[RMDB]
RNA sequence: GGGAACGACUCGAGUAGAGUCGAAAAGGUGCGCUGUGUGCGAGCGGAGGUGGACCUCGGCUUAGAAGUGCAGGUGGAGACGUGCAGUCACAGCGGCCUGUGGCUCGUUCGCGGCCGCGAUGGACAGCUGAGAAAGUGGAUCACUCAGCCGCAGACGCGUAAACCUUGUGUUCGCACAAGGUUUACGAAAAGAAACAACAACAACAAC
Reactivity to 2A3 in 0.01 (KOAc 150mM, MgCl2 10mM, bicine 150mM(pH8.5), 24C), signal-to-noise 3, nucleotides 027 to 156: g090g000u090g040c050g000c050u070g020u020g000u020g100c030g010a060g010c060g060g040a030g050g080u130g050g040a070c020c020u030c030g060g000c030u070u050a050g010a170a020g100u060g010c080a050g020g030u030g010g070a080g010a030c030g020u060g000c040a010g000u000c000a000c000a000g010c020g000g000c000c020u060g000u010g010g000c040u060c270g070u140u030c020g000c000g010g000c000c000g000c010g000a000u000g000g000a000c010a000g000c000u000g010a010g070a030a140a020g100u160g070g010a040u070c000a010c010u030c010a020g000c000c010g000c010a020g030a070c030g010
Reactivity to DMS in 0.01 (KOAc 150mM, MgCl2 10mM, bicine 150mM(pH8.5), 24C), signal-to-noise 1, nucleotides 027 to 156: g020g000u000g010c000g000c000u020g020u020g030u000g020c000g000a110g060c030g010g000a040g000g010u000g020g010a180c020c050u000c020g030g040c020u000u000a080g020a100a050g020u000g000c050a110g040g000u000g000g010a140g000a080c060g010u010g000c070a100g020u010c040a070c020a120g010c010g020g000c030c000u020g060u000g000g030c000u000c100g010u010u010c020g050c070g000g000c020c010g000c030g000a150u000g000g010a070c030a180g010c030u000g030a140g000a040a090a140g010u010g020g020a170u000c030a110c010u000c020a070g000c000c020g000c010a110g040a080c050g000
The record gives the reactivity of an RNA of 207 nucleotides to 2A3 and DMS. The 2A3 profile rests on 2,175 reads. For DMS the reverse transcriptase was MarathonRT.